[RMDB]
RNA sequence: GGGAACGACUCGAGUAGAGUCGAAAACCGUUGCACCAGGUUCGCCUGGUGCAACGGAAAAAGAUAUGGAGGCAGGUUUCGAUUACGGUCGGAAACGACCGAAUAAUGCCUGCUCCUAAGUCAAAAAUCGUUAGAGACCUUCGGGUCUCUAACGAAACGAAUAGAUGAGUUUCGACUCAUCUAUUCGAAAAGAAACAACAACAACAAC
Reactivity to 2A3 in 0.01 (KOAc 150mM, MgCl2 10mM, bicine 150mM(pH8.5), 24C), signal-to-noise 1, nucleotides 027 to 156: c000c000g000u000u000g020c060a040c010c000a000g090g090u090u090c280g140c140c030u050g000g020u010g050c040a000a010c010g000g000a010a000a000a000a020g020a030u050a040u080g000g010a030g130g160c050a000g020g020u040u160u300c170g060a030u060u120a190c010g000g010u000c040g000g030a060a100a070c000g000a000c000c020g020a000a010u070a040a000u080g000c010c000u000g010c000u000c000c000u010a100a000g010u020c070a000a000a040a040a160u040c000g000u000u000a000g000a000g000a000c020c000u010u050c300g020g000g000u000c000u000c010u000a000a000c010g000a030a000a000

About this RNA
The record gives the reactivity of an RNA of 207 nucleotides to 2A3. The 2A3 profile rests on 966 reads. Values are in units of 0.01, from 0 to 300, in steps of 10. For 2A3 the reverse transcriptase was SuperScript II with manganese. Source: RMDB library RNAMAK, as collected in RNAgym.